Conditions: 150 mM KOAc, 10 mM MgCl2 and 150 mM bicine (pH 8.5), 24 C.
Chemical mapping of a 177-nucleotide RNA with 2A3.
Source: RMDB library OK1LIB, as collected in RNAgym.
RNA sequence: GGGAACGACUCGAGUAGAGUCGAAAAGUUUGUAAAGUGCGUAACACCUGAUAAAGUGUAUUAAAUUCAAGUUCAAUACCAUUAUCAUAGUGCUUUUCAACACUUUCAAUUAUACGGCUCAUAUUAAGCUAUUAUAGUCCUUCGGGACUAUAAUAGCAAAAGAAACAACAACAACAAC
Reactivity to 2A3 in 0.01 (KOAc 150mM, MgCl2 10mM, bicine 150mM(pH8.5), 24C), signal-to-noise 9, nucleotides 027 to 126: g010u010u030u030g040u090a000a000a000g010u010g020c030g040u050a090a030c050a050c090c050u010g000a000u010a020a060a080g150u180g000u200a010u010u030a030a080a070u240u200c190a120a060g100u030u070c050a010a000u000a010c010c020a030u050u000a010u010c010a010u050a060g010u010g030c050u030u030u030u060c040a050a030c010a010c090u020u040u030c020a030a060u140u090a060u060a110c040g020g000c010u020c050a060u080a090u250u210a150a020